The record gives the reactivity of an RNA of 177 nucleotides to DMS and 2A3. It was measured as part of the RMDB library OK1LIB. 2A3 adducts were read by reverse transcription with SuperScript II with manganese. Conditions: 150 mM KOAc, 10 mM MgCl2 and 150 mM bicine (pH 8.5), 24 C. For 2A3, 1,177 sequencing reads were counted.
RNA sequence: GGGAACGACUCGAGUAGAGUCGAAAAUGGGUUUGGGGAAGACAGUAGCCACGCUGACGGCGUUAGAUGUGCUCCUGGUGGUGGAAGACAUUGCGCCUAUUUUGGUGAUUGCUCCGCUGCGCGUUGCCCCCUCGAGGAUAUUCGUAUCCUCGAGGGGAAAAGAAACAACAACAACAAC
Reactivity to DMS in 0.01 (KOAc 150mM, MgCl2 10mM, bicine 150mM(pH8.5), 24C), signal-to-noise 1, nucleotides 027 to 126: u010g000g000g000u000u040u070g020g000g040g020a140a090g020a090c060a010g000u020a080g000c070c070a020c130g000c070u020g050a090c080g000g060c040g050u030u050a060g040a030u000g080u020g010c020u000c000c000u000g000g050u010g000g000u000g000g010a090a130g000a100c040a030u010u000g010c020g010c000c020u000a100u050u040u000u000g000g000u000g000a100u070u010g000c010u050c020c000g080c050u000g020c080g000c110g000u020u000g020c100
Reactivity to 2A3 in 0.01 (KOAc 150mM, MgCl2 10mM, bicine 150mM(pH8.5), 24C), signal-to-noise 3, nucleotides 027 to 126: u150g000g000g070u110u110u000g080g000g000g010a030a030g110a020c020a050g060u080a010g010c020c020a050c120g010c050u100g070a070c030g100g040c070g000u010u040a110g050a090u070g090u150g100c030u000c000c030u000g110g060u030g000g130u080g010g000a030a030g000a040c070a060u010u210g060c010g010c000c000u120a170u010u110u120u180g030g020u040g040a120u050u130g000c040u030c000c000g040c000u020g000c010g000c040g040u010u050g060c020